[RMDB]
This 177-nucleotide RNA was probed chemically with DMS and 2A3.
RNA sequence: GGGAACGACUCGAGUAGAGUCGAAAAAGUAGGAGUACGCUCCUACAAAAACUAAUAUACCCAUAUUCUGGCUAGGUGAUCAUCAGAAUAUGGGUAUAUUAGUUUGGAGAGGCCAUACGUGGCCUCAUCGUAUCUUUAGCUUCGGCUAAAGAUACGAAAAAGAAACAACAACAACAAC
Reactivity to DMS in 0.01 (KOAc 150mM, MgCl2 10mM, bicine 150mM(pH8.5), 24C), signal-to-noise 4, nucleotides 027 to 126: a080g000u000a000g010g000a020g010u010a080c290g000c000u010c000c000u000a000c010a030a040a040a000a010c000u010a010a000u000a010u000a000c000c010c000a000u000a000u000u000c000u010g010g020c290u030a090g040g040u030g010a090u020c100a170u020c000a010g000a020a010u000a010u000g000g000g010u000a000u000a000u000u000a000g000u000u000u010g000g010a100g000a010g010g020c010c000a060u030a150c200g010u010g000g000c000c000u000c000a000
Reactivity to 2A3 in 0.01 (KOAc 150mM, MgCl2 10mM, bicine 150mM(pH8.5), 24C), signal-to-noise 2, nucleotides 027 to 126: a000g000u000a000g000g010a000g010u020a040c150g030c070u020c000c000u000a000c000a000a040a000a000a000c010u000a000a000u020a000u000a000c000c020c000a000u000a000u020u010c000u010g070g000c060u070a130g130g090u120g240a150u240c040a040u030c010a010g010a000a000u010a010u000g000g000g010u000a000u000a010u000u000a000g000u000u000u000g010g000a020g000a000g010g000c000c000a040u050a100c240g110u050g010g000c000c000u000c000a000

The 2A3 profile rests on 1,460 reads.